[RMDB]
RNA sequence: GGGAACGACUCGAGUAGAGUCGAAAAACGCAGCGCACCGCGCUCAGAUGUCAGCGUGGGGGAGUGCGAACGGGAAUGCGGCAAUGAGUGCGACUGCGAUUGUGAGCAGUGGGGCGAAGGAGACAGGAUUUGACAAAAGAUUCGUCUUUUGUCAAAUAAAAGAAACAACAACAACAAC
Reactivity to DMS in 0.01 (KOAc 150mM, MgCl2 10mM, bicine 150mM(pH8.5), 24C), signal-to-noise 9, nucleotides 027 to 126: a140c040g010c030a050g010c050g010c040a080c070c030g010c020g010c010u000c040a080g010a170u010g010u000c060a070g030c030g030u000g010g010g000g010g010a130g010u000g020c060g000a090a070c090g010g000g000a090a070u000g010c030g010g000c040a060a080u010g010a060g010u000g010c020g000a090c100u000g010c010g010a100u010u000g020u010g000a130g010c040a050g010u000g000g000g010g010c060g000a070a070g010g000a080g010a070c100a080g000g010
Reactivity to 2A3 in 0.01 (KOAc 150mM, MgCl2 10mM, bicine 150mM(pH8.5), 24C), signal-to-noise 4, nucleotides 027 to 126: a010c020g010c030a030g030c010g000c030a060c030c030g020c000g010c010u000c010a110g090a200u130g060u100c040a040g020c030g060u100g040g010g000g020g020a050g040u130g030c060g030a050a020c040g050g000g040a100a100u110g030c010g020g000c010a000a070u100g010a030g060u040g020c020g050a050c040u000g010c020g070a080u050u140g080u020g060a050g000c030a020g030u070g010g030g000g000c040g010a040a010g030g010a030g020a000c020a020g070g040

Structure probing data (DMS and 2A3) for a 177-nucleotide construct. Reactivities are rounded to 0.1 and cut off at 0 and 3. The data come from the RNA Mapping Database (RMDB), library OK2TRN. Conditions: 150 mM KOAc, 10 mM MgCl2 and 150 mM bicine (pH 8.5), 24 C.